[RMDB]
RNA sequence: GGGAACGACUCGAGUAGAGUCGAAAAGAUAUGGACGUAUCACAGGUGGAGCUCACAAUCGGAAACGAUUGUAAGAGCGCUGACUGUGAGUACGUCCUAAGUCAAAACCAAUCGUUCGCGAUUGGAACAUAUUAGUGCACUUCGGUGCACUAAUAUGAAAAGAAACAACAACAACAAC
Reactivity to 2A3 in 0.01 (KOAc 150mM, MgCl2 10mM, bicine 150mM(pH8.5), 24C), signal-to-noise 5, nucleotides 027 to 126: g040a010u060a050u170g000g000a000c000g010u010a010u040c000a000c000a000g050g120u200g080g240a040g010c000u010c000a030c010a000a010u000c010g030g040a050a090a070c020g000a010u000u010g000u050a160a100g000a010g000c020g010c040u190g090a090c000u010g010u010g030a040g000u030a000c000g000u000c000c010u000a010a000g000u020c020a030a020a080a140c000c000a000a010u000c010g050u110u100c300g010c010g210a010u000u020g000g010a030a000
Reactivity to DMS in 0.01 (KOAc 150mM, MgCl2 10mM, bicine 150mM(pH8.5), 24C), signal-to-noise 6, nucleotides 027 to 126: g000a040u010a300u010g010g010a010c000g020u000a010u000c000a020c000a020g000g000u000g000g010a060g010c000u000c000a120c000a010a000u000c000g000g010a160a130a220c010g010a020u000u000g000u010a080a070g010a020g010c000g010c020u010g010a050c000u000g000u000g000a050g020u000a010c000g010u000c000c000u010a010a080g000u010c040a120a110a100a200c010c000a000a020u000c000g030u000u010c240g030c020g000a010u000u000g000g010a120a180
Source: RMDB library TTRDES, as collected in RNAgym. The record gives the reactivity of an RNA of 177 nucleotides to 2A3 and DMS. The 2A3 profile rests on 16,539 reads. The DMS profile rests on 9,878 reads. For DMS the reverse transcriptase was MarathonRT.